The record gives the reactivity of an RNA of 177 nucleotides to DMS and 2A3.
DMS (dimethyl sulfate) methylates the pairing face of unpaired adenines and cytosines.

RNA sequence: GGGAACGACUCGAGUAGAGUCGAAAACGGUGUCGAUGUGGUACGUGUAUCCCACUCGGCUACUUCCGGUAACUAGGAGUUUGCAGUGACGUAAGUUUCGUCCUAAAAGGACUCAUCAGGUAGCCUACAGAGAUAGGUAGUUCGCUACCUAUCUCUGAAAAGAAACAACAACAACAAC
Reactivity to DMS in 0.01 (KOAc 150mM, MgCl2 10mM, bicine 150mM(pH8.5), 24C), signal-to-noise 5, nucleotides 027 to 126: c110g010g010u000g010u010c010g010a090u010g030u010g000g020u010a090c120g010u010g010u000a190u010c070c000c000a080c110u010c090g020g010c000u010a040c040u000u010c060c060g010g010u000a110a070c160u010a090g010g020a040g010u000u000u010g010c120a050g010u010g020a020c030g010u010a090a150g020u000u000u000c030g010u000c000c010u000a040a100a080a150g010g000a020c010u000c020a080u000c060a040g010g010u000a060g010c010c010u000a190
Reactivity to 2A3 in 0.01 (KOAc 150mM, MgCl2 10mM, bicine 150mM(pH8.5), 24C), signal-to-noise 5, nucleotides 027 to 126: c030g080g010u030g010u040c040g020a160u220g070u120g080g030u070a070c100g120u150g060u160a110u080c000c000c010a010c010u040c020g020g000c020u050a030c020u080u010c030c020g030g050u090a070a050c060u060a060g140g020a020g030u020u020u050g050c050a010g020u040g190a020c020g040u060a080a260g070u050u130u130c010g010u000c000c000u070a090a070a040a050g060g000a010c010u020c010a080u050c030a010g040g020u040a030g020c010c000u010a060
For DMS the reverse transcriptase was MarathonRT. The reactions ran in a buffer of 150 mM KOAc, 10 mM MgCl2 and 150 mM bicine (pH 8.5), at 24 C.